[RMDB]
RNA sequence: GGGAACGACUCGAGUAGAGUCGAAAAGUUUCAGUGACCUGUAAGACUCACUUAAAGCACCAACACUGAUAUCAUGAAAGUUCCAGAAGAAGAGAAAAAUGCAGCUGGCACUAAAAGUUAUUUGAAGAAAUAAUGACUGAAUUUCUCAACAGCCAAAGCAUCAAAAUUUAUUCGUAAAUUUUGAUGCAAAAGAAACAACAACAACAAC
Reactivity to DMS in 0.01 (KOAc 150mM, MgCl2 10mM, bicine 150mM(pH8.5), 24C), signal-to-noise 2, nucleotides 027 to 156: g020u020u010u020c010a130g020u000g000a060c080c010u030g000u010a140a200g030a160c140u000c110a120c120u000u000a100a130a060g040c000a080c050c050a110a120c030a090c050u000g020a120u000a040u000c060a110u000g020a150a150a140g000u020u010c020c020a160g000a120a120g000a120a090g000a220g000a030a010a020a110a090u000g000c010a080g030c070u000g040g040c090a040c060u000a010a100a110a140g010u000u000a020u000u000u010g000a080a180g010a070a110a070u000a040a040u000g000a080c030u000g010a060a140u000u000u010c060u010c020a120a130c000a050g000c010c040a070a110a250
Reactivity to 2A3 in 0.01 (KOAc 150mM, MgCl2 10mM, bicine 150mM(pH8.5), 24C), signal-to-noise 2, nucleotides 027 to 156: g010u010u000u050c010a000g010u020g050a040c000c030u040g030u030a100a020g020a090c020u040c060a030c000u070u120a090a080a020g030c000a030c040c020a020a050c020a020c030u010g020a040u030a020u090c120a030u050g080a090a070a000g030u050u000c020c020a020g020a040a000g040a080a000g030a050g050a010a150a010a070a020u080g010c010a020g010c000u030g010g000c010a020c040u030a060a100a050a050g020u030u030a020u070u070u040g080a080a060g060a050a070a010u100a010a030u080g030a000c020u030g030a060a110u020u110u010c030u000c010a030a090c010a040g100c040c110a050a150a000
The data come from the RNA Mapping Database (RMDB), library OK3TST. Structure probing data (DMS and 2A3) for a 207-nucleotide construct. For 2A3 the reverse transcriptase was SuperScript II with manganese. The reactions ran in a buffer of 150 mM KOAc, 10 mM MgCl2 and 150 mM bicine (pH 8.5), at 24 C.